[RMDB]
RNA sequence: GGGAACGACUCGAGUAGAGUCGAAAAGAUAUGGAUCCCACCAGCAUCGAUCGUACUGGGUCGGAAACGACCUUACGGGAGCUGAGUGGGAUCCUAAGUCAAAGAGAUAAGGUUCGCCUUAUCUCAACGGACAUACUAUCUUCGGAUAGUAUGUCCGAAAAGAAACAACAACAACAAC
Reactivity to 2A3 in 0.01 (KOAc 150mM, MgCl2 10mM, bicine 150mM(pH8.5), 24C), signal-to-noise 2, nucleotides 027 to 126: g000a020u030a000u060g010g000a020u010c000c020c010a000c010c010a000g010c000a050u300c050g010a000u000c000g010u010a020c110u100g000g000g000u000c000g000g000a000a000a000c000g010a000c020c000u040u030a010c010g000g000g030a040g000c000u020g010a000g070u000g000g040g000a000u000c000c000u000a010a000g010u000c020a050a110a100g000a000g010a000u010a010a010g100g070u080u220c300g200c060c000u000u000a010u000c000u000c000a000a000
Reactivity to DMS in 0.01 (KOAc 150mM, MgCl2 10mM, bicine 150mM(pH8.5), 24C), signal-to-noise 3, nucleotides 027 to 126: g000a010u000a000u020g000g000a000u000c000c000c000a000c010c000a010g040c010a300u000c240g010a030u010c000g000u000a010c300u030g030g000g000u000c010g010g010a000a010a030c020g030a010c010c010u020u000a000c000g000g000g000a010g060c010u000g000a100g020u000g000g000g000a000u000c000c000u010a000a110g000u000c020a100a180a140g010a000g010a010u000a000a000g000g000u010u010c300g030c010c000u000u000a000u000c000u000c000a070a100
The record gives the reactivity of an RNA of 177 nucleotides to 2A3 and DMS. 2A3 is a SHAPE reagent: it acylates the 2'-hydroxyl of flexible nucleotides of all four kinds.